[RMDB]
RNA sequence: GGGAACGACUCGAGUAGAGUCGAAAAUAACCAUCUUGUCGCCCACUUUGGCAAAAUUCCUCUCUUCAAAAUAAGCCUAGUGGUAUGGAUCUGACCUGUGACGGGAUUCACCCGGCGAGAGAGUACACUAUGCAUCCGAUUUCGAUCGGAUGCAUAGAAAAGAAACAACAACAACAAC
Reactivity to DMS in 0.01 (KOAc 150mM, MgCl2 10mM, bicine 150mM(pH8.5), 24C), signal-to-noise 2, nucleotides 027 to 126: u080a110a110c030c020a100u000c000u000u010g000u010c040g000c190c020c000a060c040u010u000u000g040g000c030a050a040a110a120u010u000c040c020u000c090u030c080u000u010c130a100a050a110a060u030a140a200g010c030c030u000a010g000u000g000g000u010a050u030g040g020a060u020c140u000g010a040c050c020u000g020u030g040a060c060g020g000g000a160u010u020c060a040c020c000c000g000g000c040g020a050g000a020g020a050g010u000a040c250a140
Reactivity to 2A3 in 0.01 (KOAc 150mM, MgCl2 10mM, bicine 150mM(pH8.5), 24C), signal-to-noise 5, nucleotides 027 to 126: u100a010a020c000c010a040u040c020u040u100g070u020c010g030c030c020c000a030c030u130u060u100g000g020c040a010a060a010a290u140u080c030c000u060c020u060c030u150u130c070a120a140a040a090u180a200a030g030c010c000u040a020g020u020g080g020u040a060u070g040g020a040u000c030u050g120a120c000c000u100g040u080g130a040c090g040g010g000a010u030u020c040a080c040c030c000g020g000c000g000a020g000a000g000a000g090u050a000c060a000